Source: RMDB library OK3TST, as collected in RNAgym.
An RNA of 207 nucleotides, treated with DMS and 2A3 and read out base by base.
High DMS reactivity at an A or C suggests that its Watson-Crick edge is free.
The RNA was probed in 150 mM KOAc, 10 mM MgCl2 and 150 mM bicine (pH 8.5) at 24 C.
For DMS the reverse transcriptase was MarathonRT.
RNA sequence: GGGAACGACUCGAGUAGAGUCGAAAAUGGGAGAAAAAGACAAGUAAACAGGCAGUUUGGGUUCAGUGGUGAUGAUUAUAAGGAUAAUGUUUCGGAAGCACACAGAAAACAUCUAAAGCAGACUGUGAAAUCAGGGACGUUUUCUCACAAGCAGGUAUCGGCUUUUAAUAUUCGUAUUAAAAGCCGAAAAAGAAACAACAACAACAAC
Reactivity to DMS in 0.01 (KOAc 150mM, MgCl2 10mM, bicine 150mM(pH8.5), 24C), signal-to-noise 1, nucleotides 027 to 156: u030g020g000g040a160g020a020a060a080a090a080g020a090c080a100a160g030u000a080a070a160c050a090g030g000c040a030g000u010u010u000g000g000g010u000u000c090a080g010u000g010g020u000g070a090u020g000a070u000u010a070u000a070a140g030g010a080u000a020a100u000g020u010u020u000c010g000g020a070a130g040c080a110c020a080c060a050g000a050a030a070a050c050a040u000c050u000a060a080a170g020c090a090g020a150c020u000g010u020g040a070a120a120u000c070a040g040g000g020a080c020g020u000u000u010u000c030u000c030a090c120a000a110g000c080a050g000g050u000a110
Reactivity to 2A3 in 0.01 (KOAc 150mM, MgCl2 10mM, bicine 150mM(pH8.5), 24C), signal-to-noise 2, nucleotides 027 to 156: u040g020g000g000a050g060a030a040a020a020a010g070a030c030a040a040g080u100a100a110a060c050a040g050g000c000a020g000u030u070u120g050g000g000u060u040c020a030g040u020g010g070u050g010a060u010g010a020u030u170a080u060a090a040g050g020a050u030a090a090u120g020u010u030u010c000g000g040a080a040g010c050a010c020a000c000a050g020a030a050a020a030c020a010u030c030u130a130a020a000g040c010a000g080a100c000u040g010u040g090a020a020a020u100c010a020g020g000g000a000c030g010u000u000u020u040c020u040c030a010c020a000a030g090c010a000g140g030u260a080